[RMDB]
RNA sequence: GGGAACGACUCGAGUAGAGUCGAAAACAUCUUUCCUCCCUACACAGUGACUCCAGCUUGGGAGGGGCAGGGCUAGGCUGAGCCAGCACUCCCUGUGGUGUCUGCCUGCCAUGUGCAGCUCUGGAGUAAAACCUGGAGAAGUUCGCUUCUCCAGGAACAAUGAUGUCCGGUUCGCCGGACAUCAUUGAAAAGAAACAACAACAACAAC
Reactivity to 2A3 in 0.01 (KOAc 150mM, MgCl2 10mM, bicine 150mM(pH8.5), 24C), signal-to-noise 2, nucleotides 027 to 156: c050a130u100c100u130u090u030c020c000u080c000c000c000u120a100c150a010c000a090g080u090g090a040c000u010c000c000a000g010c010u000u080g020g000g000a030g000g000g010g000c000a020g000g000g020c080u300a000g020g000c020u040g030a020g130c050c010a010g080c050a010c050u150c000c020c020u020g020u020g020g020u040g150u010c000u020g010c020c000u020g000c000c020a040u080g020u030g020c020a080g000c040u000c010u060g010g010a010g020u020a000a020a000a010c000c000u010g000g010a010g000a000a000g030u110u220c220g020c120u000u000c000u000c000c000a000g000g000a000a000
This 207-nucleotide RNA was probed chemically with 2A3. The reactions ran in a buffer of 150 mM KOAc, 10 mM MgCl2 and 150 mM bicine (pH 8.5), at 24 C. The data come from the RNA Mapping Database (RMDB), library M2RFOK. For 2A3 the reverse transcriptase was SuperScript II with manganese.